[RMDB]
RNA sequence: GGGAACGACUCGAGUAGAGUCGAAAACUGACCCUGUUUUCGAGGUUAUGGGUCACUUUCUCGGAUACGCAAAUUUAUUCACUCGAACCCAUGAAUUCUUUCAGAAAUCCUUUGUUUACUACGUCGGUACAUAGCUGGGGUUCGCCCCAGCUAUGUAAAAAGAAACAACAACAACAAC
Reactivity to 2A3 in 0.01 (KOAc 150mM, MgCl2 10mM, bicine 150mM(pH8.5), 24C), signal-to-noise 5, nucleotides 027 to 126: c030u030g020a010c000c000c010u010g100u040u070u080u090c040g020a040g020g050u110u110a020u160g010g000g010u000c000a010c010u040u050u010c030u000c000g060g060a140u160a070c070g010c110a060a040a060u120u190u090a150u110u130c050a050c050u040c000g040a070a040c000c000c050a050u080g060a070a070u180u030c020u040u150u040c070a020g090a030a050a080u070c040c010u090u080u070g010u040u120u100a110c080u020a030c080g160u100c030g100g000
Reactivity to DMS in 0.01 (KOAc 150mM, MgCl2 10mM, bicine 150mM(pH8.5), 24C), signal-to-noise 2, nucleotides 027 to 126: c230u010g000a040c000c010c010u010g000u020u000u020u000c040g000a020g000g020u020u010a080u030g010g010g000u000c000a040c140u030u000u010c000u010c060g000g000a050u020a080c150g030c090a060a120a080u010u030u040a040u010u000c020a060c030u030c040g020a110a130c040c000c000a080u000g000a120a110u000u010c040u000u010u000c110a030g000a100a050a080u010c030c010u030u020u020g010u000u020u020a030c070u000a060c130g010u010c080g000g040